[RMDB]
RNA sequence: GGGAACGACUCGAGUAGAGUCGAAAAAUCAGCACCUUCAGUGUGAACUGCGAGCAGCAGGUGGAGGCGCAGCGCGUGGCAGAGGGCACGCUGUCGCUGAGUCAGUGGUGUGCUCUCCUGCUGUCCACCGGCAUAGUAAUUUCGAUUACUAUGCCGGAAAAGAAACAACAACAACAAC
Reactivity to 2A3 in 0.01 (KOAc 150mM, MgCl2 10mM, bicine 150mM(pH8.5), 24C), signal-to-noise 8, nucleotides 027 to 126: a010u110c040a010g020c000a050c010c020u100u080c070a110g040u060g040u050g260a120a090c020u040g020c030g060a080g110c100a010g010c000a010g050g030u040g030g060a060g010g040c030g000c020a040g040c040g010c040g060u100g030g000c020a000g000a010g040g020g000c000a010c020g040c030u100g110u190c050g000c110u080g050a040g160u110c040a020g010u030g120g110u060g020u020g040c000u000c000u020c030c010u010g000c010u010g050u030c010c010a030
Reactivity to DMS in 0.01 (KOAc 150mM, MgCl2 10mM, bicine 150mM(pH8.5), 24C), signal-to-noise 3, nucleotides 027 to 126: a080u040c090a120g000c000a070c010c020u010u020c060a030g000u000g040u020g000a090a110c020u000g020c090g000a150g000c210a150g000c000a020g000g020u030g000g000a060g000g000c030g000c030a060g010c110g010c140g030u010g010g020c020a030g010a010g000g000g000c010a020c010g010c020u000g000u020c100g010c070u020g010a160g000u010c040a070g030u000g000g030u000g010u000g000c000u010c010u000c100c040u000g010c010u010g000u000c020c030a160